Chemical mapping of a 207-nucleotide RNA with DMS and 2A3. Conditions: 150 mM KOAc, 10 mM MgCl2 and 150 mM bicine (pH 8.5), 24 C. 2A3 adducts were read by reverse transcription with SuperScript II with manganese. For DMS, 5,039 sequencing reads were counted. The data come from the RNA Mapping Database (RMDB), library RNAMAK. For 2A3, 6,277 sequencing reads were counted. 2A3 is a SHAPE reagent: it acylates the 2'-hydroxyl of flexible nucleotides of all four kinds.
[RMDB]
RNA sequence: GGGAACGACUCGAGUAGAGUCGAAAACUAGUAUUACUUCGGUAAUACUAGCGGAUUCCUAAGUCCUCUUUGAUCAUCAGCUGAUGACCUAUCGGAAACGAUAGCAAGGCUGUGGGAGAGGAUAUGGACACUUUUUCAUCCCUUCGGGGAUGAAAAACAGGCAUUGAUUAUUCGUAAUCAAUGCCUGAAAAGAAACAACAACAACAAC
Reactivity to DMS in 0.01 (KOAc 150mM, MgCl2 10mM, bicine 150mM(pH8.5), 24C), signal-to-noise 2, nucleotides 027 to 156: c010u000a000g020u000a000u000u000a010c020u000u000c280g070g000u000a020a000u010a000c000u000a000g010c000g010g000a300u010u000c010c020u000a110a150g030u000c000c030u000c010u000u000u000g020a210u000c040a130u000c020a040g000c010u010g010a090u000g010a080c300c000u000a010u000c020g040g010a230a180a250c020g010a030u000a010g010c000a060a180g020g020c020u000g000u000g000g010g000a080g020a040g010g020a030u000a060u000g000g000a150c090a080c060u010u000u000u000u000c000a010u000c000c000c000u000u000c300g060g040g000g010a010u010g000a000a010a000a020a140
Reactivity to 2A3 in 0.01 (KOAc 150mM, MgCl2 10mM, bicine 150mM(pH8.5), 24C), signal-to-noise 5, nucleotides 027 to 156: c000u000a010g000u000a000u010u010a000c010u020u060c280g090g000u000a000a000u000a010c000u000a000g000c010g060g070a130u080u040c010c000u040a110a050g020u000c000c010u010c010u140u090u060g130a150u190c060a060u070c040a030g000c010u040g040a210u120g060a210c020c000u000a000u000c010g030g050a120a040a050c010g000a000u000a000g000c020a090a240g010g000c010u000g000u020g020g020g010a010g000a020g020g010a020u030a060u020g040g020a020c020a060c100u080u010u000u000u010c000a000u000c000c020c000u010u050c240g070g000g000g000a000u000g000a000a000a000a000a000